[RMDB]
Chemical mapping of a 177-nucleotide RNA with 2A3 and DMS. Source: RMDB library M2PK50, as collected in RNAgym. The RNA was probed in 150 mM KOAc, 10 mM MgCl2 and 150 mM bicine (pH 8.5) at 24 C.
RNA sequence: GGGAACGACUCGAGUAGAGUCGAAAAGAACAUGCGUUCGCGCAUGUUCAAAUAAAAUCAGCGGUAAUCGAGGCGUAAAUAUUACCGCUCAACGCCUCGAUAAAAGAGCUGGCUUCGGCCAGCUCAACAUCCCGUUUCAGUUCGCUGAAACGGGAUGAAAAGAAACAACAACAACAAC
Reactivity to 2A3 in 0.01 (KOAc 150mM, MgCl2 10mM, bicine 150mM(pH8.5), 24C), signal-to-noise 1, nucleotides 027 to 126: g000a000a000c000a000u000g000c020g020u000u060c220g020c000g000c050a000u000g010u020u030c000a000a000a000u060a000a020a000a080u070c040a000g000c010g070g070u110a080a060u010c000g000a000g020g000c020g020u050a020a120a080u240a060u130u250a060c030c010g000c010u020c010a020a000c000g010c000c000u020c000g000a000u010a010a100a000a020g010a000g000c040u000g000g000c010u040u020c010g090g040c000c000a000g000c000u000c000a000a000
Reactivity to DMS in 0.01 (KOAc 150mM, MgCl2 10mM, bicine 150mM(pH8.5), 24C), signal-to-noise 1, nucleotides 027 to 126: g000a070a030c000a000u000g010c000g020u000u040c300g010c030g070c010a000u000g000u000u000c000a010a020a070u010a060a090a040a100u010c180a100g010c040g000g030u010a080a010u000c020g020a000g000g000c000g040u000a070a060a100u000a090u010u010a150c080c040g000c070u000c080a160a030c020g030c010c000u000c000g000a000u010a000a010a070a190g000a000g030c000u000g010g000c020u020u000c180g030g020c000c000a000g000c000u000c000a040a080